[RMDB]
RNA sequence: GGGAACGACUCGAGUAGAGUCGAAAAGAUAUGGACAUGUCUUAAGGACAGACAUUGCUAGUCGGGAGGUCGGAAACGACCUAACGACUUGGACCAAUGUCUGUCCUUAAGAGCAUGUCCUAAGUCAGAACAAGAAUGUCUUCGGACAUUCUUGUUCAAAAGAAACAACAACAACAAC
Reactivity to DMS in 0.01 (KOAc 150mM, MgCl2 10mM, bicine 150mM(pH8.5), 24C), signal-to-noise 2, nucleotides 027 to 126: g010a110u000a300u000g000g000a030c000a010u000g000u000c000u010u000a010a010g010g000a020c000a000g010a010c000a000u000u000g000c010u020a020g010u000c000g000g010g020a050g000g000u000c000g000g000a120a110a290c000g000a040c000c000u000a030a020c000g000a000c000u000u020g020g030a170c300c020a010a010u000g000u000c000u000g010u000c000c000u000u000a000a000g000a070g000c000a010u000g010u000c000c000u000a010a070g000u010c110a090